RNA sequence: GGGAACGACUCGAGUAGAGUCGAAAAGCGCGUCGGAGAAGUCGGCGUGCGCCUCGGCCAAUAUGUGACCGCUGGAACGCAGCUCAUGGGUCUCGUGCCCAAGGAUAUCUGGGUGAUCGCCAACUUCCCGCGGGAGUAUGUUCGCAUACUCCCGCGGAAAAGAAACAACAACAACAAC
Reactivity to 2A3 in 0.01 (KOAc 150mM, MgCl2 10mM, bicine 150mM(pH8.5), 24C), signal-to-noise 2, nucleotides 027 to 126: g000c010g030c000g060u060c020g000g010a200g030a160a070g150u130c010g000g000c040g020u010g000c000g010c000c000u030c000g010g000c000c010a080a050u220a140u250g020u120g010a140c000c000g000c070u040g020g000a000a070c140g000c040a020g050c030u040c030a080u060g000g000g000u020c060u040c100g000u110g000c000c010c010a040a060g080g000a050u040a070u070c060u030g010g000g010u080g060a110u110c110g000c030c000a010a000c000u010u020c040